[RMDB]
RNA sequence: GGGAACGACUCGAGUAGAGUCGAAAAGAAAGAGAGUUAGACACGGUUGAUCUCACCCUUCGGGGGGGCUAUAGAGAUCACUGGAAGCACUACCGGACUACCGGAACAUUGCAGCAAUGCAGCCCAAAAAAUCCAAACAUCUUCGGAUGUUUGGAAAGGCAUAAUCUUAGUUCGCUAAGAUUAUGCCAAAAGAAACAACAACAACAAC
Reactivity to 2A3 in 0.01 (KOAc 150mM, MgCl2 10mM, bicine 150mM(pH8.5), 24C), signal-to-noise 2, nucleotides 027 to 156: g080a010a120a010g100a010g010a000g040u120u120a040g060a050c030a000c090g020g040u060u160g020a000u010c000u000c000a020c000c000c080u080u160c300g070g000g000g000g000g000g000c050u120a120u100a160g000a000g000a000u000c000a000c010u010g000g020a090a030g070c030a020c050u080a030c040c010g110g010a230c050u190a240c080c000g010g000a050a030c030a060u090u100g020c000a010g000c050a000a060u050g010c000a010g000c010c000c030a060a060a010a000a000a040u000c000c000a000a000a040c000a010u000c000u020u020c080g150g010a000u010g010u000u000u020g000g000a020a000a020